[RMDB]
RNA sequence: GGGAACGACUCGAGUAGAGUCGAAAAUUCGUUCAGCUAUCCGCUGGAACGCCAUCAUGACGGUGCUGCGUGCGUCGAAAAAAGACCUCGAACUGGGCGGCCAUAUGGCGUCCUUCCAGUCUUCCGCGAAAAUACUAAGCUUCGGCUUAGUAUUUUCAAAAGAAACAACAACAACAAC
Reactivity to 2A3 in 0.01 (KOAc 150mM, MgCl2 10mM, bicine 150mM(pH8.5), 24C), signal-to-noise 2, nucleotides 027 to 126: u050u040c030g000u030u040c000a020g020c040u140a140u150c090c050g000c030u020g050g000a020a020c030g000c020c010a060u150c020a010u090g080a040c030g130g180u030g040c020u010g020c030g030u040g030c100g010u020c000g120a300a020a000a000a000a000g030a030c000c000u040c040g020a130a060c040u030g030g090g100c010g070g040c000c010a070u080a040u140g030g010c000g000u000c030c000u030u020c020c000a020g000u000c060u070u000c050c010g060c020
Reactivity to DMS in 0.01 (KOAc 150mM, MgCl2 10mM, bicine 150mM(pH8.5), 24C), signal-to-noise 3, nucleotides 027 to 126: u010u010c050g000u010u010c030a060g000c050u010a130u000c210c160g010c030u000g020g000a070a040c000g000c040c020a030u000c150a020u010g020a040c070g020g050u010g000c030u000g000c020g020u000g000c190g010u000c010g000a000a040a100a100a090a180g000a060c040c020u000c040g000a070a140c100u000g000g000g050c030g000g020c020c020a040u000a040u000g010g010c010g010u000c100c090u000u000c020c020a040g010u000c150u000u010c010c030g020c240
The data come from the RNA Mapping Database (RMDB), library OK2TST.
Structure probing data (2A3 and DMS) for a 177-nucleotide construct.
Reactivities are rounded to 0.1 and cut off at 0 and 3.
2A3 adducts were read by reverse transcription with SuperScript II with manganese.
The reactions ran in a buffer of 150 mM KOAc, 10 mM MgCl2 and 150 mM bicine (pH 8.5), at 24 C.